An RNA of 207 nucleotides, treated with DMS and 2A3 and read out base by base. DMS adducts were read by reverse transcription with MarathonRT. For 2A3, 2,118 sequencing reads were counted. The reactions ran in a buffer of 150 mM KOAc, 10 mM MgCl2 and 150 mM bicine (pH 8.5), at 24 C. High 2A3 reactivity points to a flexible backbone, as in loops and unpaired stretches.
[RMDB]
RNA sequence: GGGAACGACUCGAGUAGAGUCGAAAAUUCCGCCCAAGUUCGAGAUGGGCCUCAGUUCCGAGCGAAGAGACGAGACGGGGAGGGAUCAGCGCCCGAGAGGGAGUCAAUGGUAAAGAGUGGGAGAUCGUCGGAGGGAAUCAUCCUUCCGGGCCAAGAGCUUGUGAAUUAUGUUCGCAUAAUUCACAAGAAAAGAAACAACAACAACAAC
Reactivity to DMS in 0.01 (KOAc 150mM, MgCl2 10mM, bicine 150mM(pH8.5), 24C), signal-to-noise 2, nucleotides 027 to 156: u000u000c030c050g020c000c000c030a030a160g010u020u020c040g000a110g000a110u010g050g040g020c070c040u010c070a220g010u000u000c020c020g000a140g000c100g010a110a190g010a140g030a100c080g000a160g000a130c070g010g000g050g040a140g000g000g020a070u000c010a200g030c070g010c010c030c050g030a140g010a250g030g000g020a080g000u000c050a040a090u010g040g040u010a060a080a110g000a050g080u010g010g000g000a160g000a140u010c060g030u000c000g000g000a060g010g040g050a140a130u000c160a120u000c000c020u000u000c020c010g040g000g010c020c050a050a190g010a210g000
Reactivity to 2A3 in 0.01 (KOAc 150mM, MgCl2 10mM, bicine 150mM(pH8.5), 24C), signal-to-noise 3, nucleotides 027 to 156: u060u000c050c000g010c030c010c000a100a030g050u110u160c090g080a050g010a170u060g050g000g000c000c020u090c040a100g020u120u120c000c020g010a020g030c040g030a120a020g060a020g020a040c050g020a010g020a050c040g000g010g000g010a040g020g020g000a060u100c030a020g070c010g070c050c020c020g090a090g010a040g040g010g000a010g020u030c050a100a000u080g030g050u130a110a120a020g040a040g020u070g000g040g000a070g000a060u060c070g030u040c020g010g010a000g000g010g040a000a070u130c050a090u050c040c000u010u000c010c000g010g000g050c010c020a100a030g040a020g040